[RMDB]
RNA sequence: GGGAACGACUCGAGUAGAGUCGAAAAGGAACACUGCCCGAACCCGAGAUUUGGGCGCGGCUGGUGCGGGCACUUGGCGUAGUCGACGAAGCGGACCUGCGGCCGCUGCGAGAGGCCGCUGCUCAGGCAGUCCUAGUACUUUCGAGUACUAGGACUGAAAAGAAACAACAACAACAAC
Reactivity to 2A3 in 0.01 (KOAc 150mM, MgCl2 10mM, bicine 150mM(pH8.5), 24C), signal-to-noise 6, nucleotides 027 to 126: g090g010a070a050c050a020c100u100g020c010c000c000g040a100a080c020c000c040g080a060g020a180u160u190u120g030g000g000c020g000c000g020g000c030u060g010g050u100g010c020g000g020g010c030a040c090u100u130g070g000c040g020u040a050g060u070c040g020a100c040g030a080a020g070c020g030g020a070c010c030u070g010c040g050g010c000c020g010c020u060g010c050g020a110g020a030g070g000c000c000g010c050u060g000c000u010c020a010g040g020
Reactivity to DMS in 0.01 (KOAc 150mM, MgCl2 10mM, bicine 150mM(pH8.5), 24C), signal-to-noise 5, nucleotides 027 to 126: g010g020a070a080c060a080c090u010g010c050c000c000g020a090a080c010c010c090g010a120g010a150u020u020u010g010g000g010c060g000c030g000g010c020u010g000g010u010g000c030g010g000g000c030a050c070u020u010g000g010c060g010u010a100g020u020c030g000a140c060g000a050a040g020c030g000g010a090c030c040u000g000c060g000g000c000c010g000c000u000g000c080g010a180g020a120g000g010c010c010g030c000u030g030c010u000c010a060g020g010
Record summary:
Source: RMDB library OK1LIB, as collected in RNAgym. Structure probing data (2A3 and DMS) for a 177-nucleotide construct. For 2A3, 8,483 sequencing reads were counted. The reactions ran in a buffer of 150 mM KOAc, 10 mM MgCl2 and 150 mM bicine (pH 8.5), at 24 C. For 2A3 the reverse transcriptase was SuperScript II with manganese. The DMS profile rests on 16,039 reads.